[RMDB]
RNA sequence: GGGAACGACUCGAGUAGAGUCGAAAAUUGAAGGUAAAACAGCCUGUGGGUGAAACACACCCACAGGGCCCCUUGGGCGCUAGCACACUGGUAUCACGGUACCUUUGUGCGCCUGUUUUACCGAAGGAGGGACGUGACUUCGGUCACGUCAAAAGAAACAACAACAACAAC
Reactivity to DMS in 0.01 (KOAc 150mM, MgCl2 10mM, bicine 150mM(pH8.5), 24C), signal-to-noise 2, nucleotides 027 to 129: u050u100g050a110a150g000g000u000a000a000a000a020c020a000g000c040c000u000g020u000g000g070g010u000g040a090a200a130c290a210c050a010c000c000c000a030c000a030g000g000g000c000c000c010c000u000u090g000g000g000c030g000c030u080a060g040c010a010c010a000c020u020g000g000u010a000u000c040a140c170g000g000u040a000c010c040u000u030u000g030u040g030c030g000c000c040u030g080u080u000u000u000a000c000c020g020a020a080g050g030a050g010g040
Reactivity to 2A3 in 0.01 (KOAc 150mM, MgCl2 10mM, bicine 150mM(pH8.5), 24C), signal-to-noise 4, nucleotides 027 to 129: u090u080g060a070a020g000g000u010a000a000a000a000c000a000g000c000c000u000g000u010g010g020g000u020g030a040a130a010c140a010c000a000c100c000c000a010c000a000g000g010g000c000c000c000c050u200u290g000g000g000c020g000c040u080a050g000c000a000c000a010c010u000g000g010u010a000u020c020a040c180g130g010u000a010c000c000u020u000u010g000u000g000c000g000c000c010u000g000u000u000u000u000a000c010c000g000a010a000g060g060a020g050g070